[RMDB]
An RNA of 177 nucleotides, treated with 2A3 and read out base by base. Reactivities are given for positions 27 through 126. 2A3 adducts were read by reverse transcription with SuperScript II with manganese. The RNA was probed in 150 mM KOAc, 10 mM MgCl2 and 150 mM bicine (pH 8.5) at 24 C. The 2A3 profile rests on 488 reads. It was measured as part of the RMDB library OK1LIB.

RNA sequence: GGGAACGACUCGAGUAGAGUCGAAAACAAGUGACCAUUCGGCAAAACGGCUACAUCAUUAAUCAGCGCUAUGUGCCGCCCGGGGCAUUUACUAUUAAUGAUCUCUAUCCUACCGCCGCCAGCGGCGCCGUAGCCGACGCUUCGGCGUCGGCUACGGAAAAGAAACAACAACAACAAC
Reactivity to 2A3 in 0.01 (KOAc 150mM, MgCl2 10mM, bicine 150mM(pH8.5), 24C), signal-to-noise 1, nucleotides 027 to 126: c000a050a070g100u030g080a000c000c000a070u130u080c050g020g000c000a000a000a060a160c040g020g050c000u040a000c020a050u120c040a030u040u140a040a000u130c090a000g050c020g040c230u050a030u040g030u040g000c000c000g020c010c000c000g110g000g000g010c070a000u150u060u190a190c080u090a060u160u060a060a000u040g070a050u000c020u000c020u130a130u030c000c000u010a050c020c060g000c000c000g110c000c060a070g000c000g020g000c000g000